[RMDB]
Structure probing data (DMS and 2A3) for a 177-nucleotide construct.
RNA sequence: GGGAACGACUCGAGUAGAGUCGAAAAGGUGACGGUGUGUGGGCCAUCUAUACGGUGGACGCCGACGGUGGUGCCCGCGUUGAACAGGUGUAUGCGACCGAGCUUGACGCCCUGCGCGCGAACAAGGUCUAGUGGCCACGUUCGCGUGGCCACUAGAAAAAGAAACAACAACAACAAC
Reactivity to DMS in 0.01 (KOAc 150mM, MgCl2 10mM, bicine 150mM(pH8.5), 24C), signal-to-noise 1, nucleotides 027 to 126: g000g000u000g000a170c050g010g050u000g000u020g080u020g000g030g000c040c080a000u010c050u000a010u040a120c130g060g040u000g010g000a030c110g050c070c000g060a070c170g000g000u080g000g020u000g000c050c020c050g000c160g000u000u000g020a070a220c240a100g000g050u000g000u020a070u040g040c030g000a050c030c080g000a130g030c000u000u020g000a110c050g000c040c010c010u020g000c030g000c000g000c030g050a050a020c100a090a140g000g020
Reactivity to 2A3 in 0.01 (KOAc 150mM, MgCl2 10mM, bicine 150mM(pH8.5), 24C), signal-to-noise 1, nucleotides 027 to 126: g190g000u300g000a090c030g010g000u050g100u180g030u120g060g010g060c000c000a000u050c000u100a140u030a300c280g000g000u050g010g000a120c030g000c000c000g040a110c050g000g000u210g000g000u000g000c000c000c000g060c000g000u000u180g130a190a080c060a030g060g000u060g000u030a040u180g040c030g000a030c070c000g000a050g000c000u000u000g090a000c000g050c000c000c000u080g020c000g000c000g000c000g020a070a050c050a210a000g130g000
For DMS, 1,234 sequencing reads were counted. The RNA was probed in 150 mM KOAc, 10 mM MgCl2 and 150 mM bicine (pH 8.5) at 24 C.